[RMDB]
The record gives the reactivity of an RNA of 177 nucleotides to 2A3 and DMS. The RNA was probed in 150 mM KOAc, 10 mM MgCl2 and 150 mM bicine (pH 8.5) at 24 C. For 2A3 the reverse transcriptase was SuperScript II with manganese. For 2A3, 3,435 sequencing reads were counted.

RNA sequence: GGGAACGACUCGAGUAGAGUCGAAAAGUGGCAUACUUCGGUAUGCCACAAACCAGACCCUAUCUGGAACACGCUCUACUGCGUGAUCCCAAGUAGAUCCGAAAAGUCGUGGGUUCGCCCACGACAAGACAGUAACUGACUUCGGUCAGUUACUGUCAAAAGAAACAACAACAACAAC
Reactivity to 2A3 in 0.01 (KOAc 150mM, MgCl2 10mM, bicine 150mM(pH8.5), 24C), signal-to-noise 2, nucleotides 027 to 126: g010u000g000g020c010a020u030a000c010u040u070c210g070g010u010a010u010g030c000c000a010c000a000a010a000c010c000a000g050a010c050c030c030u080a100u080c020u020g010g030a020a030c010a000c030g010c000u040c040u150a060c080u080g050c010g010u020g020a050u030c000c000c000a010a030g030u040a010g050a110u090c110c070g130a100a090a040a020g000u000c000g010u010g000g040g000u050u020c240g060c030c000c030a040c020g000a000c000a000a000
Reactivity to DMS in 0.01 (KOAc 150mM, MgCl2 10mM, bicine 150mM(pH8.5), 24C), signal-to-noise 2, nucleotides 027 to 126: g010u000g010g000c000a000u000a000c000u000u000c210g020g040u000a000u000g000c010c000a000c010a000a050a150c060c080a070g000a100c140c100c100u000a100u000c030u010g010g000a080a190c050a020c010g020c000u010c240u020a110c050u010g000c030g000u000g000a120u010c000c010c000a020a030g000u000a040g000a170u010c060c060g000a030a070a110a110g000u000c010g030u000g000g000g020u000u000c240g010c000c000c000a000c000g000a030c000a010a020